[RMDB]
RNA sequence: GGGAACGACUCGAGUAGAGUCGAAAACGCUGGGUAACCCGCUCGUUUACAGGGAGCUGAAGCGCGCACGGCAUCGAUCUGUAAUGACGAGCCCGUUACCUGUGCUGAAGCGCGCACGGCAACCGAAAGGUGCGACCCUCACCGUUCGCGGUGAGAACUGAGUACAAUAAUUCGUUAUUGUACUCAGAAAAGAAACAACAACAACAAC
Reactivity to 2A3 in 0.01 (KOAc 150mM, MgCl2 10mM, bicine 150mM(pH8.5), 24C), signal-to-noise 6, nucleotides 027 to 156: c030g010c020u060g000g000g020u010a010a010c020c070c060g000c000u000c000g020u030u010u020a030c020a020g000g040g020a030g000c000u020g030a220a040g020c020g000c010g020c020a010c030g020g000c010a070u300c150g040a050u020c010u010g010u010a060a080u200g130a040c030g000a000g000c000c030c000g000u000u010a010c000c000u020g050u060g000c020u060g030a160a040g010c010g000c000g000c010a010c020g040g000c050a070a040c020c010g060a090a030a020g030g000u040g020c010g060a070c000c010c000u010c000a000c010c000g030u070u080c260g000c010g110g000u010g000a010g000a020a010
Reactivity to DMS in 0.01 (KOAc 150mM, MgCl2 10mM, bicine 150mM(pH8.5), 24C), signal-to-noise 2, nucleotides 027 to 156: c060g030c030u000g050g040g030u010a040a040c000c060c050g040c020u010c020g040u030u020u010a040c010a080g010g010g000a080g000c000u000g000a080a040g050c000g000c000g030c040a300c060g020g000c000a300u010c130g010a080u000c020u000g000u000a000a100u020g010a040c020g010a040g020c020c000c090g010u010u000a010c030c010u010g000u000g000c010u010g010a180a030g020c000g020c010g000c010a240c040g010g030c010a060a250c030c000g000a050a070a110g020g020u000g020c020g000a180c000c060c020u000c010a000c010c000g040u000u000c170g040c030g000g020u000g010a010g000a060a120